[RMDB]
RNA sequence: GGGAACGACUCGAGUAGAGUCGAAAACUAUGCAGAUUCGUCUGCAUAGAGACCCGAUGAAGCGGCACUUACACAGCUUCAUACACGUAAGAAGUGCAUUAAAGGGACGAGGGUUCGCCCUCGUCAACAUCAUGCGACUAUUCGUAGUCGCAUGAUGAAAAGAAACAACAACAACAAC
Reactivity to 2A3 in 0.01 (KOAc 150mM, MgCl2 10mM, bicine 150mM(pH8.5), 24C), signal-to-noise 5, nucleotides 027 to 126: c010u010a000u000g000c000a000g010a040u020u100c100g140u000c070u000g000c000a000u010a000g000a010g020a020c000c000c000g000a030u030g000a000a000g010c030g040g050c050a010c050u050u130a030c150a010c010a080g000c000u000u020c000a010u030a010c110a010c070g100u060a060a040g060a090a010g060u010g030c010a030u120u260a190a090a070g210g050g010a000c000g000a000g010g020g010u020u060c200g110c020c000c000u000c000g000u000c000a000a000
Reactivity to DMS in 0.01 (KOAc 150mM, MgCl2 10mM, bicine 150mM(pH8.5), 24C), signal-to-noise 4, nucleotides 027 to 126: c000u000a000u000g000c000a000g000a020u000u020c180g020u000c000u000g010c010a010u000a000g000a110g000a160c000c000c000g000a060u000g010a010a010g020c010g030g010c010a030c070u010u000a120c120a060c090a070g010c010u010u000c010a010u000a170c090a100c170g000u010a130a050g030a070a020g020u000g040c040a150u020u010a030a080a180g010g000g000a000c000g010a010g010g010g010u000u020c210g010c000c010c010u000c000g020u000c000a050a090
Record summary
Structure probing data (2A3 and DMS) for a 177-nucleotide construct. For 2A3 the reverse transcriptase was SuperScript II with manganese. The DMS profile rests on 3,740 reads. High 2A3 reactivity points to a flexible backbone, as in loops and unpaired stretches. In probing experiments dimethyl sulfate is read out at A N1 and C N3, which are open when not base-paired.